[RMDB]
About this RNA: Chemical mapping of a 177-nucleotide RNA with 2A3 and DMS. The 2A3 profile rests on 835 reads. The data come from the RNA Mapping Database (RMDB), library OK2TRN.
RNA sequence: GGGAACGACUCGAGUAGAGUCGAAAAGCGCUGCAGGCGCGUACUGAUCCGUACCUGUCAUGCGCGCAUGCGCGUAGCAGUACACUAGGCCGAUCGUAGGCCCUGCGCGCGCGGCGCCUGAGUACCAACCCCCGAGUACAUUCGUGUACUCGGGGGUAAAAGAAACAACAACAACAAC
Reactivity to 2A3 in 0.01 (KOAc 150mM, MgCl2 10mM, bicine 150mM(pH8.5), 24C), signal-to-noise 1, nucleotides 027 to 126: g000c000g030c010u090g000c090a100g160g100c010g010c020g020u030a040c160u070g020a030u050c140c090g090u090a050c010c050u030g030u060c020a020u060g020c010g000c020g030c050a120u200g040c020g000c030g000u030a100g020c020a000g090u100a100c000a090c190u140a070g000g090c030c010g090a190u290c200g230u270a060g010g030c010c050c020u010g000c000g010c000g060c010g030c000g010g000c030g000c020c020u040g030a010g020u020a020c000c010a000
Reactivity to DMS in 0.01 (KOAc 150mM, MgCl2 10mM, bicine 150mM(pH8.5), 24C), signal-to-noise 1, nucleotides 027 to 126: g020c000g000c020u000g000c010a300g020g020c000g010c020g020u000a060c160u000g000a070u000c140c140g000u010a030c070c060u020g030u000c010a040u010g000c000g000c000g040c120a080u030g050c010g040c000g020u000a030g030c040a070g000u000a030c000a130c290u000a120g000g000c060c040g010a140u030c270g010u000a250g000g010c000c000c010u000g010c000g010c050g000c010g010c030g000g010c030g000c010c020u000g010a100g010u000a110c020c040a000